[RMDB]
RNA sequence: GGGAACGACUCGAGUAGAGUCGAAAAAGUACAAGUGUCGUGCUGCUCCAGGGUUCUUGGUGUGGGUUCCGUCUCACACUUCACACCCUCAAAGUAGCCUUCCUGCAGUUUUGUCUGCAGGUUGUGUUUAUGUUGUCAGGUUCGCCUGACAACAUAAAAAAGAAACAACAACAACAAC
Reactivity to DMS in 0.01 (KOAc 150mM, MgCl2 10mM, bicine 150mM(pH8.5), 24C), signal-to-noise 3, nucleotides 027 to 126: a040g010u000a050c090a100a100g010u010g020u010c070g000u010g000c000u000g010c010u010c110c300a120g000g000g000u010u000c010u000u000g000g000u000g010u000g000g010g000u010u070c270c190g000u040c010u000c000a010c000a000c010u000u040c020a000c160a020c030c010c000u000c080a180a050a020g020u000a020g000c020c030u010u000c010c010u000g000c000a010g000u000u040u010u010g000u030c000u000g010c000a000g010g000u000u000g000u000g010u000
Reactivity to 2A3 in 0.01 (KOAc 150mM, MgCl2 10mM, bicine 150mM(pH8.5), 24C), signal-to-noise 5, nucleotides 027 to 126: a000g200u180a080c100a120a080g060u050g060u140c040g060u060g010c000u000g010c010u020c010c040a000g010g010g000u000u030c010u000u010g000g000u020g000u000g010g030g000u160u300c080c040g260u030c000u000c000a000c010a000c000u090u120c020a080c020a000c020c020c000u010c010a050a080a000g010u000a010g000c010c000u000u000c000c000u000g000c000a000g000u020u060u300u300g210u110c010u000g000c000a000g000g000u000u010g000u000g010u010